[RMDB]
RNA sequence: GGGAACGACUCGAGUAGAGUCGAAAAUUACACUGAGAGCAUUUAGCCUGAUUACUCUUUAAAUCAAAUCAGGCAAUAGAGAGAAACUCGAGAGGUGAAAACCGCACAGCAUUCUGAAAUGUAUUUGAAGGCAACGCUACCUUCGGGUAGCGUUGAACAGUAUUUGUUACUUCGGUAACAAAUACUGAAAAGAAACAACAACAACAAC
Reactivity to 2A3 in 0.01 (KOAc 150mM, MgCl2 10mM, bicine 150mM(pH8.5), 24C), signal-to-noise 3, nucleotides 027 to 156: u090u080a070c080a020c080u170g060a000g010a000g060c020a050u010u010u100a010g000c010c000u000g030a010u010u060a050c040u040c050u140u280u160a050a090a050u190c080a020a030a020u000c000a010g000g000c010a000a000u030a000g030a000g010a010g000a070a040a040c040u050c060g020a070g010a070g100g020u020g020a020a080a020a040c020c020g000c030a030c010a040g060c000a070u130u100c040u090g040a090a110a100u060g040u040a140u110u140u150g060a090a030g050g000c000a000a000c000g000c000u000a000c000c000u030u020c090g020g000g000u000a000g020c000g000u000u000g000a000a000
Reactivity to DMS in 0.01 (KOAc 150mM, MgCl2 10mM, bicine 150mM(pH8.5), 24C), signal-to-noise 1, nucleotides 027 to 156: u000u000a130c100a150c060u000g010a050g000a020g020c030a300u000u000u000a110g000c050c010u010g020a070u030u000a040c010u000c020u000u000u000a020a050a010u010c060a100a120a030u000c010a020g040g000c010a120a080u000a140g010a130g020a200g000a090a100a070c030u000c020g020a070g000a090g020g000u000g000a170a090a080a040c000c000g000c010a090c070a060g000c000a100u000u000c000u000g000a090a060a120u000g030u010a100u000u000u000g020a090a090g000g020c000a020a020c040g000c000u000a000c000c010u010u000c280g020g000g030u010a010g040c000g020u000u000g000a050a070
Chemical mapping of a 207-nucleotide RNA with 2A3 and DMS. The DMS profile rests on 2,460 reads. For 2A3 the reverse transcriptase was SuperScript II with manganese. DMS (dimethyl sulfate) methylates the pairing face of unpaired adenines and cytosines. Source: RMDB library M2RFPK, as collected in RNAgym.